[RMDB]
This 207-nucleotide RNA was probed chemically with DMS and 2A3. The DMS profile rests on 2,315 reads.
RNA sequence: GGGAACGACUCGAGUAGAGUCGAAAAGCAGAUGCAGAGUGUGAGCACUCUGAAUCUCGCGGGUAGUAGUCUUCCUCACAAGACGUCUGUGAUUCUGACCCGAGUCAGGACCACACUACCGACGUACUCGGGUAUGUCAGACGCGAGCAUCUGAGGACACUACAAUCUUCUUCGGAAGAUUGUAGUGAAAAGAAACAACAACAACAAC
Reactivity to DMS in 0.01 (KOAc 150mM, MgCl2 10mM, bicine 150mM(pH8.5), 24C), signal-to-noise 1, nucleotides 027 to 156: g070c020a070g000a050u000g000c010a000g000a050g000u000g000u000g010a240g070c020a040c020u000c060u050g000a030a020u000c030u000c090g070c020g030g050g100u020a050g020u000a160g000u000c010u000u010c030c080u010c060a070c050a100a120g000a100c020g040u000c040u000g010u000g020a060u000u010c040u000g010a040c010c120c300g010a170g020u000c110a050g020g000a100c020c060a010c060a040c040u000a030c020c030g030a050c060g040u000a050c030u000c040g000g040g000u000a040u000g000u000c010a070g010a060c060g010c070g000a160g030c030a070u000c050u030g000a020g030g000a250
Reactivity to 2A3 in 0.01 (KOAc 150mM, MgCl2 10mM, bicine 150mM(pH8.5), 24C), signal-to-noise 1, nucleotides 027 to 156: g010c000a000g000a000u020g000c000a010g000a000g000u020g010u060g070a090g110c000a000c000u000c000u000g010a000a020u030c020u070c090g020c000g000g000g020u010a020g000u010a020g020u000c020u010u000c010c010u030c000a030c010a030a040g050a110c000g010u000c000u020g040u030g060a160u160u010c010u070g010a000c000c000c040g000a000g010u000c020a040g000g010a000c020c000a040c010a010c030u020a010c000c000g030a040c050g020u030a000c010u030c030g060g000g000u000a020u050g020u010c000a000g000a030c000g000c010g000a020g010c010a050u040c040u050g000a000g040g010a010
The 2A3 profile rests on 1,955 reads. Values cover nucleotides 27 to 156. Conditions: 150 mM KOAc, 10 mM MgCl2 and 150 mM bicine (pH 8.5), 24 C. For DMS the reverse transcriptase was MarathonRT. The data come from the RNA Mapping Database (RMDB), library OK3TST.